[RMDB]
RNA sequence: GGGAACGACUCGAGUAGAGUCGAAAACGUCGCGUGUUCGCACGCGACGAAACGAGAAACGGCAAAUAAGCCGAUCCCAGGCGUUCGUACGCCAUACUCAAAAAAGUCCCUGCUUCGGCAGGGACAACUUUAACUUUCCGUUCGCGGAAAGUUAAAGAAAAGAAACAACAACAACAAC
Reactivity to DMS in 0.01 (KOAc 150mM, MgCl2 10mM, bicine 150mM(pH8.5), 24C), signal-to-noise 1, nucleotides 027 to 126: c000g020u010c010g050c000g050u000g000u000u000c220g020c020a050c020g010c020g020a000c000g010a010a030a090c130g000a070g000a080a080a260c000g000g000c000a130a040a160u010a170a120g000c000c000g000a060u000c000c000c000a120g020g000c000g000u000u030c300g030u000a080c020g010c010c010a000u010a060c010u010c040a000a090a010a070a130a110g000u000c000c000c000u000g010c020u000u000c160g040g000c010a050g000g000g010a000c000a000a060
Reactivity to 2A3 in 0.01 (KOAc 150mM, MgCl2 10mM, bicine 150mM(pH8.5), 24C), signal-to-noise 2, nucleotides 027 to 126: c010g010u010c020g000c000g000u010g020u010u020c150g000c060a000c000g030c000g000a000c000g010a000a010a000c030g010a010g050a040a090a040c010g040g020c030a070a190a300u190a250a090g010c030c010g000a030u000c000c010c000a000g010g010c010g060u140u260c130g070u300a020c000g010c030c000a040u070a070c030u050c070a020a060a070a090a010a000g010u040c010c000c000u000g000c000u050u050c230g110g000c010a000g000g000g010a010c000a000a000
The data come from the RNA Mapping Database (RMDB), library M2PK50.
Chemical mapping of a 177-nucleotide RNA with DMS and 2A3.
High DMS reactivity at an A or C suggests that its Watson-Crick edge is free.
2A3 adducts were read by reverse transcription with SuperScript II with manganese.
The 2A3 profile rests on 1,945 reads.